[RMDB]
RNA sequence: GGGAACGACUCGAGUAGAGUCGAAAACGGCGUGGUUUGGCACCUCGAUGUCGGCUCGUCGCAUCCUGGGGCUGGAGAAGGUCCCAAGGGUCCGGCUGUUCGCCGGUUAAAGCGGCACGCGAGCUGGGGUGUAACCCAUGUUCGCAUGGGUUACACCAAAAGAAACAACAACAACAAC
Reactivity to 2A3 in 0.01 (KOAc 150mM, MgCl2 10mM, bicine 150mM(pH8.5), 24C), signal-to-noise 3, nucleotides 027 to 126: c010g040g010c010g000u040g030g020u060u050u110g070g000c010a020c010c020u040c030g050a050u100g100u100c020g010g020c010u010c020g080u070c000g000c010a030u000c000c010u010g000g000g020g000c020u070g100g100a240g080a260a080g090g010u000c010c000c010a010a040g010g010g000u000c000c000g000g000c010u050g170u230u160c120g000c000c000g010g000u010u060a050a040a000g000c000g000g040c080a020c140g060c030g010a000g000c020u040g000g070
Reactivity to DMS in 0.01 (KOAc 150mM, MgCl2 10mM, bicine 150mM(pH8.5), 24C), signal-to-noise 2, nucleotides 027 to 126: c060g000g000c070g040u000g000g030u000u060u010g020g000c020a030c010c010u040c040g010a100u050g020u010c020g030g000c010u010c020g000u010c000g010c050a010u000c000c010u000g010g010g000g010c010u000g000g030a240g010a180a220g000g030u000c000c000c000a010a030g040g020g030u000c020c020g000g010c000u020g000u080u060c180g020c030c000g000g000u010u020a000a060a160g030c010g000g000c110a120c170g000c070g000a030g030c010u000g000g000